Background
This 177-nucleotide RNA was probed chemically with 2A3 and DMS. For 2A3, 4,748 sequencing reads were counted. The reactions ran in a buffer of 150 mM KOAc, 10 mM MgCl2 and 150 mM bicine (pH 8.5), at 24 C. 2A3 adducts were read by reverse transcription with SuperScript II with manganese.

RNA sequence: GGGAACGACUCGAGUAGAGUCGAAAAAUUAACCCAGCCUAAAUGAAGAGCAGGACAAAAGGUUCGUCUGCAAACACUCCAUGGUAGACAGAGGAUCGGGAAAUGGAUGUGGACUAUUUGGAAGUAAUUCCAGAUAUUAAUUCGUUAAUAUCUGGAAAAAAGAAACAACAACAACAAC
Reactivity to 2A3 in 0.01 (KOAc 150mM, MgCl2 10mM, bicine 150mM(pH8.5), 24C), signal-to-noise 4, nucleotides 027 to 126: a000u050u050a030a060c010c010c000a020g030c010c020u110a150a140a120u150g050a050a040g030a010g060c010a030g010g060a030c030a030a230a020a030g080g000u070u070c040g030u000c030u010g010c000a020a070a000c020a000c010u000c010c020a010u040g040g040u100a060g030a040c020a010g170a060g050g030a090u080c040g140g300g140a040a060a010u040g000g000a020u060g010u020g020g020a000c010u040a070u120u110u090g030g010a020a020g010u070a010a090
Reactivity to DMS in 0.01 (KOAc 150mM, MgCl2 10mM, bicine 150mM(pH8.5), 24C), signal-to-noise 9, nucleotides 027 to 126: a090u010u010a110a140c010c010c010a180g010c050c030u000a040a080a070u010g010a100a090g010a150g000c040a050g000g000a060c080a060a070a100a110g010g010u000u000c090g010u000c010u000g010c040a070a050a100c040a050c060u000c030c030a040u000g010g020u000a090g000a060c070a090g010a120g000g000a070u000c040g010g010g010a050a070a050u000g000g000a060u010g020u000g010g000a070c090u000a050u000u000u000g010g010a070a080g000u010a070a130